[RMDB]
RNA sequence: GGGAACGACUCGAGUAGAGUCGAAAAGUCAUAGCGAUCACUGAAUGGAGCUGUGAUGUAAUGAAGACCUGCCAUACCCAAAUGUGUGUCUGUGCAGUUGUCACUGGACCAGCUUCUGUGUGGCUUUGAGAUGAUCCGUUUAGCUGAACAGUUCAGAUCCGUCCUAAAUCUUCGGAUUUAGGACGGAAAAAGAAACAACAACAACAAC
Reactivity to DMS in 0.01 (KOAc 150mM, MgCl2 10mM, bicine 150mM(pH8.5), 24C), signal-to-noise 2, nucleotides 027 to 156: g000u000c020a070u000a070g030c030g050a090u000c040a210c050u000g000a110a300u000g010g010a180g050c010u010g040u010g030a160u000g020u010a040a060u000g000a070a070g000a060c050c050u010g110c020c000a100u000a020c020c030c050a080a120a150u020g010u010g030u010g010u000c020u000g000u000g000c060a120g010u000u000g000u000c010a050c030u010g010g000a100c160c010a030g000c010u000u000c030u030g070u010g060u000g000g010c020u010u000u010g000a150g010a140u020g000a070u000c010c050g000u010u000u010a100g010c010u020g090a010a200c120a160g010u020u010c070a030g000a210
Reactivity to 2A3 in 0.01 (KOAc 150mM, MgCl2 10mM, bicine 150mM(pH8.5), 24C), signal-to-noise 2, nucleotides 027 to 156: g050u000c000a030u010a020g080c020g050a200u140c060a040c100u140g180a210a220u170g030g010a010g010c000u010g000u000g020a050u110g050u160a060a070u180g070a120a010g000a000c000c000u000g000c000c000a020u000a040c010c030c070a030a300a300u250g040u040g030u010g010u020c050u010g100u170g040c050a010g000u160u100g000u090c040a000c050u050g070g000a000c020c000a000g000c000u040u000c030u020g000u000g000u050g050g000c000u150u070u090g070a160g000a080u140g000a050u010c020c000g000u000u000u110a060g000c030u080g020a130a020c060a210g050u090u050c020a000g000a110